Notes
Structure probing data (DMS) for a 177-nucleotide construct. The RNA was probed in 150 mM KOAc, 10 mM MgCl2 and 150 mM bicine (pH 8.5) at 24 C.

RNA sequence: GGGAACGACUCGAGUAGAGUCGAAAAUGAUUGCUCUUCGGAGCAAUCACACUACCGAGGUUGUUGCUCGGUAUAAACUACAAACCCUUGGAAACAAGGGAAGAAGAAAACGAUUCGUCGUUUUCAAACUACCUUAGGACUUCGGUCCUAAGGUAGUAAAAGAAACAACAACAACAAC
Reactivity to DMS in 0.01 (KOAc 150mM, MgCl2 10mM, bicine 150mM(pH8.5), 24C), signal-to-noise 2, nucleotides 027 to 126: u000g000a000u000u010g010c000u000c000u010u000c180g020g030a030g030c010a000a000u000c010a040c160a070c120u000a000c000c000g010a040g010g020u000u010g030u000u000g010c000u000c020g020g010u000a010u010a030a040a110c110u000a130c130a120a130a120c010c000c000u000u020g000g000a120a080a200c000a000a000g010g020g020a010a030g000a120a110g000a000a000a000a000c000g000a080u000u010c230g030u000c000g000u010u000u010u000c020a080a070
The data come from the RNA Mapping Database (RMDB), library M2PK50.